[RMDB]
RNA sequence: GGGAACGACUCGAGUAGAGUCGAAAAAUUUUACCUCUGAGUUUUCUCCCAGUUUUGUGCUCUUCACGUUAGCUGAGGGAGGCUGUGUUGAGAGCCAGGGAAUGUGGCCACAUGCUGUAGCUCUGGGCGAAGACAUCAGGUUCGCCUGAUGUCUUCGAAAAGAAACAACAACAACAAC
Reactivity to 2A3 in 0.01 (KOAc 150mM, MgCl2 10mM, bicine 150mM(pH8.5), 24C), signal-to-noise 1, nucleotides 027 to 126: a000u060u010u040u050a110c050c000u000c120u100g020a050g030u070u060u120u060c010u050c000c000c000a010g030u110u080u160u150g120u050g000c020u000c000u020u150c030a050c060g060u150u160a030g050c060u100g080a070g010g230g000a030g010g000c020u030g020u000g020u120u220g050a040g010a010g030c000c010a000g000g010g000a050a090u080g010u050g020g000c040c000a020c030a160u120g010c000u010g070u010a010g050c000u010c030u040g030g020g000
Reactivity to DMS in 0.01 (KOAc 150mM, MgCl2 10mM, bicine 150mM(pH8.5), 24C), signal-to-noise 1, nucleotides 027 to 126: a060u010u010u010u010a090c090c020u010c050u000g020a050g010u000u010u000u010c140u000c010c020c000a170g000u000u000u010u010g020u010g020c110u000c000u000u010c180a040c050g000u000u000a020g020c030u000g000a180g020g020g000a140g010g000c010u000g040u000g000u000u010g010a070g000a070g010c010c040a090g010g020g010a090a070u010g020u000g000g000c020c110a040c090a070u000g000c070u000g040u000a080g010c040u000c030u000g000g020g000